[RMDB]
RNA sequence: GGGAACGACUCGAGUAGAGUCGAAAAUGCCGAUGGUUGGAAGAUGGUCGCCCUGGCGUCGAAUACGCGCGAGCGCAUGAGCUCACCGGUUCGGAACAACGUAUCGAAGAACGUCGCACUGCUGGCAUGAGAGAAUAGUCUUCGGACUAUUCUCUCAAAAAGAAACAACAACAACAAC
Reactivity to 2A3 in 0.01 (KOAc 150mM, MgCl2 10mM, bicine 150mM(pH8.5), 24C), signal-to-noise 3, nucleotides 027 to 126: u180g020c020c000g040a070u070g060g140u100u120g050g080a070a030g010a130u070g040g040u030c010g030c000c010c010u020g040g030c040g040u000c000g040a070a060u160a120c040g030c020g000c040g010a020g000c050g010c070a100u180g070a020g000c000u000c010a020c020c000g030g000u030u060c030g000g060a070a000c010a030a020c050g050u050a070u100c050g040a050a050g030a100a050c030g050u010c030g010c020a050c050u070g020c030u040g000g020c070a080
Reactivity to DMS in 0.01 (KOAc 150mM, MgCl2 10mM, bicine 150mM(pH8.5), 24C), signal-to-noise 4, nucleotides 027 to 126: u030g010c010c010g000a050u020g000g040u030u000g020g030a060a090g010a030u020g000g010u010c070g000c020c040c030u020g010g010c030g010u000c040g010a050a030u020a070c070g030c110g030c100g000a050g040c020g010c190a090u050g000a120g000c050u010c020a070c060c010g000g000u010u000c030g000g020a070a070c170a070a100c080g030u000a080u030c030g030a100a140g010a060a050c040g010u030c040g020c040a090c030u000g010c030u000g000g010c100a100

Annotation
This 177-nucleotide RNA was probed chemically with 2A3 and DMS. The RNA was probed in 150 mM KOAc, 10 mM MgCl2 and 150 mM bicine (pH 8.5) at 24 C. DMS adducts were read by reverse transcription with MarathonRT. Reactivities are given for positions 27 through 126. For 2A3, 2,045 sequencing reads were counted. 2A3 is a SHAPE reagent: it acylates the 2'-hydroxyl of flexible nucleotides of all four kinds. It was measured as part of the RMDB library OK1LIB.